[RMDB]
RNA sequence: GGGAACGACUCGAGUAGAGUCGAAAAUGCGCUUCGUCGAGGAUGAUGUAUGCGCCGUUGAGCGUCCUGCCGCGCAUAUAGGCGAGCGGGGCGAUUUCAAUCAGGCCUUUUUCAAUCAGCUUGGUGAAUACCCACUAGCAUUCGUGCUAGUGGGUAUAAAAGAAACAACAACAACAAC
Reactivity to DMS in 0.01 (KOAc 150mM, MgCl2 10mM, bicine 150mM(pH8.5), 24C), signal-to-noise 3, nucleotides 027 to 126: u030g010c060g010c020u000u000c020g020u010c010g000a100g010g000a060u000g000a050u000g010u030a010u000g010c100g010c000c070g010u000u000g000a020g020c000g000u010c000c000u000g030c010c010g000c000g040c180a180u050a130u070a120g010g010c000g000a180g010c030g010g000g010g010c000g010a010u020u010u020c010a040a010u010c070a210g000g000c000c030u000u000u020u010u000c070a070a050u010c090a120g020c020u000u000g010g010u010g000a130
Reactivity to 2A3 in 0.01 (KOAc 150mM, MgCl2 10mM, bicine 150mM(pH8.5), 24C), signal-to-noise 7, nucleotides 027 to 126: u160g020c090g030c040u020u030c010g060u010c010g030a050g100g090a210u060g010a010u020g130u140a070u070g080c110g000c020c000g010u000u000g020a010g010c000g000u000c000c010u010g020c010c030g070c000g020c170a050u260a060u160a280g170g020c010g010a020g000c010g010g000g000g000c000g000a030u030u180u010c010a010a010u050c040a020g010g000c010c010u030u070u010u050u120c100a130a130u020c020a030g090c020u020u070g020g000u010g010a020
The record gives the reactivity of an RNA of 177 nucleotides to DMS and 2A3. Reactivities are given for positions 27 through 126. Source: RMDB library OK1LIB, as collected in RNAgym.